Source: RMDB library OK3TST, as collected in RNAgym. Structure probing data (DMS and 2A3) for a 207-nucleotide construct. For DMS the reverse transcriptase was MarathonRT. The RNA was probed in 150 mM KOAc, 10 mM MgCl2 and 150 mM bicine (pH 8.5) at 24 C. For 2A3 the reverse transcriptase was SuperScript II with manganese.
RNA sequence: GGGAACGACUCGAGUAGAGUCGAAAAGAACCUUACCACCUCAUUCUGACAUCAGUGCUCCUUUGUCUGUGGAGGAUUGGCCACCUGGGAAGCAGAGCUCCUUUCUUGUGAGGUAGUACAUUAGCCACUCUCCCAUUCUAAGGCAGUAAUAACAUAAACUACGUAAUGGAUUCGUCCAUUACGUAGUAAAAGAAACAACAACAACAAC
Reactivity to DMS in 0.01 (KOAc 150mM, MgCl2 10mM, bicine 150mM(pH8.5), 24C), signal-to-noise 2, nucleotides 027 to 156: g010a110a130c040c060u000u010a060c010c040a070c030c010u000c040a140u010u010c020u030g020a090c060a070u010c020a130g020u020g000c000u000c030c010u010u000u000g010u000c060u000g000u010g010g000a090g020g020a150u000u000g070g000c010c030a040c010c060u000g000g020g000a120a150g020c040a130g010a170g000c050u000c020c010u000u000u000c070u000u000g010u000g000a060g010g010u000a030g000u010a080c110a170u010u010a100g020c040c030a090c030u010c010u000c000c000c000a170u000u000c060u010a050a090g010g010c040a040g010u000a090a090u010a040a110c040a100u000a110a100
Reactivity to 2A3 in 0.01 (KOAc 150mM, MgCl2 10mM, bicine 150mM(pH8.5), 24C), signal-to-noise 5, nucleotides 027 to 156: g050a040a050c010c010u030u030a050c020c030a050c020c020u040c020a090u180u110c060u120g060a070c010a100u130c060a060g050u040g040c030u040c010c000u050u070u070g030u060c030u030g040u120g000g010a030g000g040a050u060u150g040g010c010c010a080c020c040u040g040g010g020a080a020g030c050a020g000a030g060c010u090c010c070u060u080u090c060u100u170g050u080g040a040g040g010u020a010g020u050a040c040a140u100u130a010g030c010c010a010c050u060c000u000c000c010c000a000u060u000c040u080a040a020g020g040c060a000g050u090a070a170u090a120a000c050a080u270a200a060